[RMDB]
RNA sequence: GGGAACGACUCGAGUAGAGUCGAAAAUAUUAGCUCGUAAACAUGGCACUUGUUGUACUACAAGGGACAGAUUUUAUCGCUUGGCAAAUGAGUGUGCUCAGGUGCUAAGCGAAUAUGUUCUAUGUGGCUAUGAGAGGAAGUUCGCUUCCUCUCAUAGAAAAGAAACAACAACAACAAC
Reactivity to 2A3 in 0.01 (KOAc 150mM, MgCl2 10mM, bicine 150mM(pH8.5), 24C), signal-to-noise 4, nucleotides 027 to 126: u160a050u110u120a030g020c020u020c070g130u130a080a090a040c030a150u080g070g020c050a010c050u020u030g010u000u020g010u040a030c000u010a000c020a060a150g020g000g000a000c010a020g090a070u100u100u050u140a100u090c000g000c010u010u000g010g000c000a000a030a030u000g000a000g020u220g050u180g170c010u000c010a010g030g010u000g000c000u010a010a000g010c010g000a000a000u010a000u000g010u000u000c020u010a080u080g000u010g020g010
Reactivity to DMS in 0.01 (KOAc 150mM, MgCl2 10mM, bicine 150mM(pH8.5), 24C), signal-to-noise 4, nucleotides 027 to 126: u020a070u000u000a110g010c040u000c060g010u010a070a090a110c120a060u000g000g010c040a120c130u000u000g000u000u000g010u010a090c070u020a030c030a050a300g000g000g000a010c020a020g010a160u010u000u010u010a070u010c000g020c000u000u000g000g020c030a000a010a020u000g000a020g010u010g020u010g020c000u010c000a010g010g010u000g000c000u000a000a010g010c010g020a020a020u010a070u000g000u000u000c030u000a160u000g010u010g000g010

The record gives the reactivity of an RNA of 177 nucleotides to 2A3 and DMS. It was measured as part of the RMDB library 15KREP. The reactions ran in a buffer of 150 mM KOAc, 10 mM MgCl2 and 150 mM bicine (pH 8.5), at 24 C. For DMS the reverse transcriptase was MarathonRT.